[RMDB]
RNA sequence: GGGAACGACUCGAGUAGAGUCGAAAAGAAGUCGAGUUUGACAAAGGUCAAAGAACUGAUAAAUAUGGACGUGGCUUAGCGUAUAUUUAUGCUGAUGGAAAAAUGGUAAACGAAGCUUUAGUUCGUCGCUGCAGUACACUUUCGAGUGUACUGCAGCAAAAGAAACAACAACAACAAC
Reactivity to 2A3 in 0.01 (KOAc 150mM, MgCl2 10mM, bicine 150mM(pH8.5), 24C), signal-to-noise 3, nucleotides 027 to 126: g020a020a010g040u060c070g000a000g060u070u080u080g020a000c040a000a280a000g130g000u040c030a040a030a000g040a180a030c030u080g070a020u170a060a110a020u070a190u140g090g120a020c000g000u010g110g070c140u090u080a000g000c000g040u050a030u000a000u000u100u000a140u100g040c020u030g030a150u090g070g150a020a120a000a000a000u170g000g060u210a080a050a000c020g040a000a000g050c000u010u110u030a020g090u100u050c000g050u020c060
Reactivity to DMS in 0.01 (KOAc 150mM, MgCl2 10mM, bicine 150mM(pH8.5), 24C), signal-to-noise 1, nucleotides 027 to 126: g000a000a030g000u000c000g000a140g000u030u000u000g000a010c070a030a160a200g000g000u000c010a030a030a130g050a100a090c100u000g000a070u000a000a030a050u010a060u000g000g000a040c070g000u000g000g020c100u000u000a140g030c060g000u020a150u000a120u000u070u000a010u000g000c000u000g000a080u010g040g000a000a030a080a100a020u010g010g000u000a040a100a000c020g000a100a090g040c010u000u010u010a040g060u000u000c010g000u000c100

The record gives the reactivity of an RNA of 177 nucleotides to 2A3 and DMS.
For DMS the reverse transcriptase was MarathonRT.